[RMDB]
RNA sequence: GGGAACGACUCGAGUAGAGUCGAAAAACCUUCAACACACUGCUGAAGGCAUGCAUGCGCGGCCAGAACGCGGCUCGCGCCGACGAGGUCCUCGCCUGGAUGCGUGAACGCGGCUGCCAGGGGAAUGCUGAGCAUCCUUGUUCGCAAGGAUGCUCAGAAAAGAAACAACAACAACAAC
Reactivity to DMS in 0.01 (KOAc 150mM, MgCl2 10mM, bicine 150mM(pH8.5), 24C), signal-to-noise 1, nucleotides 027 to 126: a090c020c000u000u000c020a010a050c100a080c130a100c260u000g040c000u000g010a090a020g000g000c050a070u000g030c100a080u000g000c010g080c180g000g020c030c050a080g000a080a070c150g010c000g040g000c010u030c110g020c130g000c040c060g000a050c040g020a080g010g010u000c040c030u000c030g010c030c050u000g000g030a130u000g010c030g030u000g000a070a090c130g020c030g000g030c010u000g000c030c040a040g000g000g000g020a150a020u010g010
Reactivity to 2A3 in 0.01 (KOAc 150mM, MgCl2 10mM, bicine 150mM(pH8.5), 24C), signal-to-noise 1, nucleotides 027 to 126: a000c020c000u030u080c100a120a000c030a000c020a050c150u150g020c000u000g050a020a000g000g090c020a040u070g050c040a010u100g000c000g000c000g000g030c050c000a030g080a300a060c060g010c000g020g000c040u010c060g060c050g000c020c000g030a040c000g010a000g030g080u100c020c000u070c040g090c000c050u070g030g130a050u060g000c030g110u000g020a020a000c050g020c050g120g040c050u030g040c000c040a030g080g020g030g070a130a000u120g000
Chemical mapping of a 177-nucleotide RNA with DMS and 2A3. The 2A3 profile rests on 983 reads. The reactions ran in a buffer of 150 mM KOAc, 10 mM MgCl2 and 150 mM bicine (pH 8.5), at 24 C.